[RMDB]
RNA sequence: GGGAACGACUCGAGUAGAGUCGAAAAGCACCGCCGCAGUGCAGCCAACCUCCUACCGCACACACGCUGCCCGAGCCUGCUGCUGUCGCAGUCGUACCCGGUCCGGGGCCGGACCCGGGUAGGCGUACCUAUACUCGACCUUCGGGUCGAGUAUAGGAAAAGAAACAACAACAACAAC
Reactivity to DMS in 0.01 (KOAc 150mM, MgCl2 10mM, bicine 150mM(pH8.5), 24C), signal-to-noise 1, nucleotides 027 to 126: g010c030a030c040c020g010c040c050g030c050a120g000u010g030c050a090g000c060c010a070a120c050c040u020c030c030u000a050c060c070g000c060a070c070a120c050a100c060g000c010u000g010c030c010c040g010a160g000c050c030u010g020c020u010g000c060u000g000u000c170g010c080a080g020u000c030g010u000a050c000c010c010g020g000u000c010c000g000g010g020g000c110c010g010g000a040c090c040c040g030g040g000u000a000g010g000c030g000u020a090